[RMDB]
RNA sequence: GGGAACGACUCGAGUAGAGUCGAAAAUUGGAAGGUGGUGUGAGGCGAAGCGGCUGGAGGCAGGAGGCUAGCGGAUUGGGGGGAAGAAAAGCCGAAAUGGAUUCCCGGGUUCAUGGAUGGAAGAGAACACUCUUAUAGAGUUCGCUCUAUAAGAGUGAAAAGAAACAACAACAACAAC
Reactivity to DMS in 0.01 (KOAc 150mM, MgCl2 10mM, bicine 150mM(pH8.5), 24C), signal-to-noise 3, nucleotides 027 to 126: u010u010g010g000a110a060g000g020u000g010g020u020g020u000g010a100g020g000c070g000a110a130g020c070g020g000c040u000g010g010a060g010g000c060a060g010g010a080g000g010c080u000a090g040c090g000g000a150u000u010g010g020g000g000g010g000a050a100g000a050a060a060a120g010c030c020g010a070a060a070u010g020g010a170u000u000c020c010c010g000g000g020u000u000c070a040u010g010g010a070u010g000g000a080a050g000a130g000a060a180
Reactivity to 2A3 in 0.01 (KOAc 150mM, MgCl2 10mM, bicine 150mM(pH8.5), 24C), signal-to-noise 1, nucleotides 027 to 126: u070u030g070g000a030a000g000g040u060g020g000u030g060u070g040a060g050g000c050g020a090a010g040c000g040g000c030u040g030g000a010g050g030c040a040g000g040a020g010g060c070u040a030g010c020g020g010a040u040u080g000g000g000g000g000g010a010a010g040a050a110a010a000g000c000c000g030a060a040a090u090g000g020a000u030u020c000c010c050g000g010g000u000u090c040a010u020g060g000a020u060g000g080a070a010g020a000g000a080a000